Source: RMDB library OK2TRN, as collected in RNAgym. Chemical mapping of a 177-nucleotide RNA with DMS and 2A3. For 2A3, 8,790 sequencing reads were counted. The RNA was probed in 150 mM KOAc, 10 mM MgCl2 and 150 mM bicine (pH 8.5) at 24 C.
[RMDB]
RNA sequence: GGGAACGACUCGAGUAGAGUCGAAAACGGCUCCGAGAUAGACGUUGUAGAGCAGGAACCGACACAGCCUCACAACAAUGGCAAUGCCAGCAGCAACACAACCACAACGGAGGUGGCAUGUUCGUGACGUCUUGAAGUAAUUCGUUACUUCAAGACGAAAAGAAACAACAACAACAAC
Reactivity to DMS in 0.01 (KOAc 150mM, MgCl2 10mM, bicine 150mM(pH8.5), 24C), signal-to-noise 7, nucleotides 027 to 126: c080g000g000c020u000c020c030g010a130g000a130u000a090g020a110c100g000u000u000g020u000a090g010a110g010c070a080g000g020a080a080c040c030g000a070c100a070c070a110g000c030c010u000c070a070c040a070a050c110a090a070u000g010g010c040a080a080u010g010c020c020a040g020c060a070g010c040a050a050c080a050c080a060a100c050c040a040c080a070a090c130g010g000a070g000g010u000g000g010c100a050u000g010u000u000c060g010u000g020a260
Reactivity to 2A3 in 0.01 (KOAc 150mM, MgCl2 10mM, bicine 150mM(pH8.5), 24C), signal-to-noise 5, nucleotides 027 to 126: c020g010g010c010u000c020c060g040a060g030a150u170a070g080a050c060g010u030u050g070u080a080g000a010g040c020a010g020g040a050a060c020c020g070a010c020a000c000a060g020c020c000u050c010a040c010a080a040c020a060a150u080g020g000c030a080a090u140g010c010c000a000g020c000a000g010c000a050a030c040a010c010a070a100c010c010a030c010a140a050c060g060g000a030g020g060u020g030g000c060a040u100g030u070u060c050g040u060g090a040